[RMDB]
RNA sequence: GGGAACGACUCGAGUAGAGUCGAAAAGAGAUGCUAGGAGUCGGGAGAGGUCAGAACGACUGGGAAAGAAAAGAGAGCAACGGGGCUAGCUGCCGGGUGUUCCACCUACGGGAACGGUGCCGAGUGACAGGGUUGAUGUUCGCAUCAACCAAAAGAAACAACAACAACAAC
Reactivity to DMS in 0.01 (KOAc 150mM, MgCl2 10mM, bicine 150mM(pH8.5), 24C), signal-to-noise 9, nucleotides 027 to 129: g010a070g030a050u000g000c050u020a050g040g000a070g050u050c070g040g000g020a060g020a080g000g000u000c090a090g040a140a150c110g020a060c030u000g010g020g000a020a040a040g020a050a060a090a090g030a040g020a090g000c100a060a070c060g000g010g010g020c070u030a070g040c040u020g000c000c000g040g020g020u000g020u010u020c020c040a070c070c070u010a100c130g000g000g000a030a060c070g030g030u020g000c010c020g020a050g000u050g030a000c110a090g030
Reactivity to 2A3 in 0.01 (KOAc 150mM, MgCl2 10mM, bicine 150mM(pH8.5), 24C), signal-to-noise 7, nucleotides 027 to 129: g050a000g010a010u070g040c030u050a020g030g020a020g030u070c010g000g020g000a030g010a010g020g030u050c050a020g060a130a050c060g030a020c030u050g030g010g000a030a060a010g030a010a060a030a020g070a000g000a000g020c030a040a070c050g030g000g020g000c030u050a030g010c030u030g030c020c000g010g000g020u050g010u020u020c030c020a070c010c020u090a060c070g010g000g020a060a010c010g010g020u050g020c000c020g020a000g020u060g020a030c060a070g070

The record gives the reactivity of an RNA of 170 nucleotides to DMS and 2A3. Values cover nucleotides 27 to 129. The reactions ran in a buffer of 150 mM KOAc, 10 mM MgCl2 and 150 mM bicine (pH 8.5), at 24 C. The DMS profile rests on 57,606 reads. The 2A3 profile rests on 21,250 reads.